About this RNA: The data come from the RNA Mapping Database (RMDB), library OK3TST. This 207-nucleotide RNA was probed chemically with 2A3. The 2A3 profile rests on 616 reads. The RNA was probed in 150 mM KOAc, 10 mM MgCl2 and 150 mM bicine (pH 8.5) at 24 C. For 2A3 the reverse transcriptase was SuperScript II with manganese.

RNA sequence: GGGAACGACUCGAGUAGAGUCGAAAAGCACAGUGGGAGCUGCGCACAUGUGUUUUGUGUGGGUGUGUACAUGUUUAGUACCUGCAUGAGGGCUUGGCACCCACAUGGCCUCUUGCAUACGUAUGUGUUUCAGAGGAGUGUGCGAGGAAGUGCGUAGGGACGAGUAUGACUUCGGUCAUACUCGUCCAAAAGAAACAACAACAACAAC
Reactivity to 2A3 in 0.01 (KOAc 150mM, MgCl2 10mM, bicine 150mM(pH8.5), 24C), signal-to-noise 2, nucleotides 027 to 156: g020c000a000c070a040g040u180g010g070g020a060g040c040u030g000c010g040c010a010c010a050u030g020u020g020u170u100u190u180g040u010g010u000g010g050g020u000g000u050g000u150a000c010a120u110g050u110u150u000a090g020u110a280c030c030u020g150c060a070u150g120a020g030g010g000c040u040u080g050g000c000a000c010c030c000a000c000a000u000g060g000c000c000u010c010u020u010g000c020a030u100a090c110g120u150a130u300g090u030g040u080u130u190c080a080g030a030g000g010a090g060u000g010u010g000c010g010a020g020g020a080a070g020u030g000c010g000u040a120g000